[RMDB]
RNA sequence: GGGAACGACUCGAGUAGAGUCGAAAAGAUAUGGAGUCAUCGCGAUGUGGGACAAUGAUGCUGCGUAACAUCCCAUCGGAAACGAUGGGUGGCAGUUGAGUCCCGCAUCGCGAUGACUCCUAAGUCACAUAUUCGCAGGGUUCGCCCUGCGAAUAUGAAAAGAAACAACAACAACAAC
Reactivity to DMS in 0.01 (KOAc 150mM, MgCl2 10mM, bicine 150mM(pH8.5), 24C), signal-to-noise 1, nucleotides 027 to 126: g000a030u000a300u050g010g020a010g000u000c000a000u050c000g010c010g030a010u000g040u000g040g000g010a030c000a160a160u010g020a180u010g000c000u000g020c020g010u010a020a070c300a010u020c000c000c000a010u020c000g000g000a200a070a200c000g000a000u000g000g020g010u000g000g020c000a000g000u000u000g000a130g000u000c000c000c000g000c000a000u000c000g030c000g000a000u000g000a000c000u000c000c000u000a000a020g000u010c060a270